The record gives the reactivity of an RNA of 177 nucleotides to DMS and 2A3. For 2A3 the reverse transcriptase was SuperScript II with manganese. The RNA was probed in 150 mM KOAc, 10 mM MgCl2 and 150 mM bicine (pH 8.5) at 24 C. It was measured as part of the RMDB library OK2TRN. For 2A3, 2,930 sequencing reads were counted. The DMS profile rests on 2,299 reads.
RNA sequence: GGGAACGACUCGAGUAGAGUCGAAAAGGAUUCAACGAGCCAUUACACUGGUUUUAAUGGAGGCUAGGCAUUGGCCUUCAUUCCAAGAAAAUUUCACUCAGACCAAUGUUUGCCCAAUUUGCCAGAACUACAUUGUGGGAUUCGUCCCACAAUGUAGAAAAGAAACAACAACAACAAC
Reactivity to DMS in 0.01 (KOAc 150mM, MgCl2 10mM, bicine 150mM(pH8.5), 24C), signal-to-noise 3, nucleotides 027 to 126: g000g020a080u000u010c150a090a110c160g000a080g010c020c020a110u020u000a060c070a090c060u010g000g010u000u010u000u010a050a010u000g000g000a010g000g030c010u000a080g010g000c080a050u000u000g020g000c000c000u010u000c020a010u000u000c110c140a090a060g000a020a040a060a140u000u010u000c100a090c090u000c080a040g020a030c060c020a040a050u000g010u000u000u000g000c010c000c010a080a110u000u000u000g020c030c020a120g010a070a230
Reactivity to 2A3 in 0.01 (KOAc 150mM, MgCl2 10mM, bicine 150mM(pH8.5), 24C), signal-to-noise 3, nucleotides 027 to 126: g010g010a090u120u060c040a070a000c090g030a020g020c000c000a010u050u050a040c090a010c070u040g050g030u000u050u080u160a020a020u030g010g020a030g000g000c020u040a050g040g060c060a060u020u110g020g000c000c010u010u000c000a000u000u030c020c020a060a010g170a050a130a040a050u110u210u110c050a060c060u070c030a020g030a060c020c010a010a020u070g030u050u040u060g030c000c000c010a060a100u050u030u020g020c020c010a030g020a100a010